[RMDB]
RNA sequence: GGGAACGACUCGAGUAGAGUCGAAAACACAUUCUAUUCGUAGAAUGUGGAACGUAGAGAGAUCGACAGCGUCGCAGCUAUGUCGAACGAGGUAGAGCGCGCAGGGAUCGGGCUUCGGCCCGAUCAAUUCAGUUAAAGUAUUCGUACUUUAACUGAAAAAAGAAACAACAACAACAAC
Reactivity to 2A3 in 0.01 (KOAc 150mM, MgCl2 10mM, bicine 150mM(pH8.5), 24C), signal-to-noise 2, nucleotides 027 to 126: c000a000c000a000u000u000c010u020a030u060u080c140g100u030a000g000a010a010u010g000u020g000g020a080a020c040g090u180a020g030a010g000a010g000a210u050c020g030a030c030a030g010c010g110u220c110g000c070a100g030c020u050a040u190g150u050c020g020a110a080c080g020a040g020g040u050a020g000a020g010c030g000c010g000c020a030g110g100g010a000u000c000g000g000g010c010u050u060c230g070g010c000c000c000g000a000u000c000a000a010
Reactivity to DMS in 0.01 (KOAc 150mM, MgCl2 10mM, bicine 150mM(pH8.5), 24C), signal-to-noise 9, nucleotides 027 to 126: c010a010c000a000u000u000c000u000a030u000u010c190g020u000a010g000a010a010u000g020u000g000g000a080a070c140g000u000a080g010a110g010a130g000a100u000c020g010a070c080a070g000c030g000u010c170g010c110a110g000c020u000a050u000g000u000c010g000a050a120c130g000a060g010g010u000a040g000a110g010c030g010c040g010c070a100g000g000g000a010u000c000g010g000g010c000u000u020c210g030g010c000c000c000g000a000u000c010a030a060